The record gives the reactivity of an RNA of 207 nucleotides to DMS and 2A3.
RNA sequence: GGGAACGACUCGAGUAGAGUCGAAAAUCCGCAACAUGUGUAUGCAGCUUUACCCUAAAGCCGAAAAAACAAGCCUAAAAGCGUUUUUAGAAAAUUGUGGGUUAGAUUCGAAGGUAGACCUGCCCUACCAUCUCAUGUGGAAGUAUUAUGAAACGCGUGUAGUAACUGAUUUCGAUCAGUUACUACAAAAAGAAACAACAACAACAAC
Reactivity to DMS in 0.01 (KOAc 150mM, MgCl2 10mM, bicine 150mM(pH8.5), 24C), signal-to-noise 3, nucleotides 027 to 156: u010c030c010g040c040a060a110c040a070u000g010u000g010u000a070u000g010c010a060g030c040u000u000u000a070c030c020c010u010a110a090a090g020c030c030g000a000a050a080a080a120a080c040a070a140g020c040c020u000a060a040a100a120g000c080g020u000u000u000u000u000a140g000a080a070a090a120u000u000g030u020g030g010g010u000u010a090g010a180u000u000c040g000a130a090g000g010u010a040g010a070c040c020u000g000c000c050c010u010a030c020c030a050u000c050u000c100a060u000g050u000g000g000a070a170g010u000a100u000u010a100u010g000a050a060a050c050g030c060g030
Reactivity to 2A3 in 0.01 (KOAc 150mM, MgCl2 10mM, bicine 150mM(pH8.5), 24C), signal-to-noise 4, nucleotides 027 to 156: u020c000c010g040c030a040a030c020a100u070g040u020g090u160a060u110g010c010a000g000c020u060u060u100a100c010c010c010u090a080a060a000g020c020c000g120a110a020a020a020a000a050c040a040a040g010c000c030u120a050a060a050a010g030c020g010u050u040u020u060u090a070g060a060a130a060a060u080u140g030u100g030g000g030u050u060a060g050a150u090u110c070g050a080a020g010g010u020a010g020a050c000c020u040g010c000c010c000u010a020c000c030a040u030c020u030c020a020u100g000u050g030g030a020a030g040u070a080u300u090a090u200g070a070a030a020c030g010c020g010
Values are in units of 0.01, from 0 to 300, in steps of 10.
High DMS reactivity at an A or C suggests that its Watson-Crick edge is free.
The reactions ran in a buffer of 150 mM KOAc, 10 mM MgCl2 and 150 mM bicine (pH 8.5), at 24 C.